Structure probing data (2A3 and DMS) for a 177-nucleotide construct. 2A3 adducts were read by reverse transcription with SuperScript II with manganese. For DMS, 6,419 sequencing reads were counted. It was measured as part of the RMDB library TTRDES. Conditions: 150 mM KOAc, 10 mM MgCl2 and 150 mM bicine (pH 8.5), 24 C.
RNA sequence: GGGAACGACUCGAGUAGAGUCGAAAAAAAAGAUAUGGAGCCAUGCAAGGCGAUAACACCGAAGAACUUGCUCGGAAACGAGCAAGGGAGGUGCUAAUCGCUGAUGACCAUGGCUCCUAAGUCAAAACAUAUCAUCCUUGUUCGCAAGGAUGAUAUGAAAAGAAACAACAACAACAAC
Reactivity to 2A3 in 0.01 (KOAc 150mM, MgCl2 10mM, bicine 150mM(pH8.5), 24C), signal-to-noise 3, nucleotides 027 to 126: a010a000a000a050g060a030u080a040u150g010g000a010g000c010c000a010u010g000c020a100a230g010g000c000g000a010u010a020a000c000a000c010c000g200a270a050g000a030a030c010u000u010g000c020u000c010g000g010a030a080a100c020g000a000g030c000a000a010g020g000g000a030g020g000u010g000c020u050a160a130u010c000g000c010u030g050a250u160g020a020c050c020a010u010g010g010c010u000c010c000u000a010a000g010u000c020a000a040a030a080
Reactivity to DMS in 0.01 (KOAc 150mM, MgCl2 10mM, bicine 150mM(pH8.5), 24C), signal-to-noise 6, nucleotides 027 to 126: a080a050a040a110g010a040u000a300u000g010g000a030g030c010c000a020u000g000c030a090a130g010g010c000g000a000u010a050a070c000a000c000c000g000a150a120g000a120a160c000u000u000g000c000u010c000g010g000a120a100a160c010g000a010g010c000a000a000g000g010g000a040g020g020u000g000c030u000a100a060u000c000g030c000u000g010a070u020g010a180c300c010a010u000g000g010c000u000c000c000u000a010a070g010u000c030a080a090a060a190